RNA sequence: GGGAACGACUCGAGUAGAGUCGAAAAACCUCUAAGUUCGCUUAGAGGUAAUGAACGCUGCAUAAAGCAGCGCGCUCAGCGGAGCACGCAAAAGCAACGCAAGAACACCAUUCUUCGGAAUGGUGAAGUAUGAAAACCAUUUCGAUGGUUUUCAUACAAAAGAAACAACAACAACAAC
Reactivity to DMS in 0.01 (KOAc 150mM, MgCl2 10mM, bicine 150mM(pH8.5), 24C), signal-to-noise 4, nucleotides 027 to 126: a050c000c000u000c000u000a010a010g010u000u010c240g040c010u000u010a010g000a030g000g010u000a000a010u010g010a110a090c010g010c000u000g000c000a110u010a070a140a240g000c010a010g000c000g000c080g010c060u000c050a100g020c040g000g000a290g020c030a030c130g020c140a070a030a190a070g000c010a030a190c020g010c050a110a100g000a130a160c000a010c000c000a000u000u000c000u010u000c180g020g010a000a000u000g000g010u000g000a020a060
Reactivity to 2A3 in 0.01 (KOAc 150mM, MgCl2 10mM, bicine 150mM(pH8.5), 24C), signal-to-noise 6, nucleotides 027 to 126: a000c000c000u000c000u010a000a020g010u030u120c160g040c120u000u000a000g000a010g000g000u020a010a080u100g000a090a020c010g000c000u010g000c040a080u210a300a190a060g000c000a000g010c000g010c010g030c000u070c030a030g020c020g060g010a020g040c030a020c100g140c070a060a060a020a060g000c010a020a020c010g000c040a050a030g060a100a020c000a000c010c000a000u010u010c000u020u070c250g100g000a010a000u010g000g000u000g000a020a000